[RMDB]
RNA sequence: GGGAACGACUCGAGUAGAGUCGAAAAGAUUGCCGAAGGAGAGUUGCUGACUCUCGGGAAGAGGUGUUUUACUACUGAUUCUGGCCUCUUCGUCUUUGUCGUCGGUGGGGACGCUAAAUACACAAUCCCCCUUACAUCGUUUCGACGAUGUAAGGGGAAAAGAAACAACAACAACAAC
Reactivity to DMS in 0.01 (KOAc 150mM, MgCl2 10mM, bicine 150mM(pH8.5), 24C), signal-to-noise 2, nucleotides 027 to 126: g000a090u010u010g020c030c020g040a120a120g010g010a000g010a020g010u000u000g020c300u000g000a070c010u000c010u000c020g040g010g010a020a020g030a070g010g030u000g020u000u000u020u000a070c110u010a110c150u000g010a120u010u010c050u020g010g010c000c030u000c020u000u000c010g000u020c030u010u000u010g000u010c040g030u000c040g040g020u020g000g000g000g000a070c060g000c220u000a010a040a060u020a110c170a100c110a050a150u000c090
Reactivity to 2A3 in 0.01 (KOAc 150mM, MgCl2 10mM, bicine 150mM(pH8.5), 24C), signal-to-noise 2, nucleotides 027 to 126: g030a010u050u160g060c010c010g070a090a000g170g010a000g000a010g020u090u180g160c120u170g050a050c010u000c000u010c000g000g050g010a010a000g010a010g000g050u010g100u000u090u020u090a060c050u000a010c020u030g030a080u060u030c030u080g060g010c010c010u000c020u000u020c010g040u000c070u060u090u110g120u120c060g000u020c030g080g020u120g040g080g010g010a000c000g020c080u050a080a000a080u190a000c060a000c050a080a070u200c010
This 177-nucleotide RNA was probed chemically with DMS and 2A3.
Reactivities are given for positions 27 through 126.
The RNA was probed in 150 mM KOAc, 10 mM MgCl2 and 150 mM bicine (pH 8.5) at 24 C.
2A3 adducts were read by reverse transcription with SuperScript II with manganese.
Source: RMDB library OK2TST, as collected in RNAgym.
DMS adducts were read by reverse transcription with MarathonRT.